RNA sequence: GGGAACGACUCGAGUAGAGUCGAAAAGAAAAGAGGGAGGCGUACAGGGAGCAGCCGCGCGAGGGAUGUACGCAGGCAGGAUCGGGACGGCGGAGAUCCGGCCGCCGGGAUCGCGCGGCUGAAAAAAUACACUCUUACUGUUCGCAGUAAGAGUGUAAAAAGAAACAACAACAACAAC
Reactivity to DMS in 0.01 (KOAc 150mM, MgCl2 10mM, bicine 150mM(pH8.5), 24C), signal-to-noise 2, nucleotides 027 to 126: g000a100a050a080a100g000a190g000g000g000a070g000g000c020g020u000a030c040a140g010g010g000a170g010c010a020g000c010c000g010c010g000c010g000a040g020g000g000a140u000g000u010a040c070g010c050a080g000g000c070a090g000g000a070u000c040g000g000g010a070c090g000g050c030g040g010a140g000a050u000c050c050g000g010c010c000g030c040c020g020g000g000a130u000c010g000c020g030c000g010g020c000u000g000a000a000a070a050a060a090

Conditions: 150 mM KOAc, 10 mM MgCl2 and 150 mM bicine (pH 8.5), 24 C. Structure probing data (DMS) for a 177-nucleotide construct.